[RMDB]
RNA sequence: GGGAACGACUCGAGUAGAGUCGAAAAGUCACUCAAUUCGUUGAGUGACAUACUGGGCCCGGAGUCGCGCAUGAAAGGGUCAAGACGCGCUCGAUAUAAUAACUAGUUGCCAGUUCGCUGGCAACAAUGAUUGAGAUUACUUCGGUAAUCUCAAUCAAAAAGAAACAACAACAACAAC
Reactivity to DMS in 0.01 (KOAc 150mM, MgCl2 10mM, bicine 150mM(pH8.5), 24C), signal-to-noise 3, nucleotides 027 to 126: g010u000c000a010c000u000c000a010a020u000u010c160g010u010u010g000a010g010u000g010a020c010a020u010a030c100u000g010g000g000c030c000c010g000g010a100g010u000c060g040c060g040c050a140u010g010a070a170a110g000g000g010u000c050a150a040g010a140c030g020c040g010c020u010c020g000a090u020a070u000a070a080u010a050a170c160u010a110g000u000u010g010c000c000a000g020u010u020c210g000c010u000g000g020c000a010a000c000a060a070
Reactivity to 2A3 in 0.01 (KOAc 150mM, MgCl2 10mM, bicine 150mM(pH8.5), 24C), signal-to-noise 2, nucleotides 027 to 126: g020u000c000a000c000u010c000a000a030u090u040c180g040u070u030g000a000g000u000g010a000c000a000u030a010c000u050g030g090g040c010c000c000g030g000a030g030u240c040g010c020g010c120a050u160g100a130a080a130g160g000g010u080c060a000a040g050a040c020g010c000g000c020u010c010g050a030u030a010u020a300a140u130a120a020c080u050a040g000u000u010g000c000c000a020g000u020u030c230g030c060u010g000g010c020a000a000c000a000a000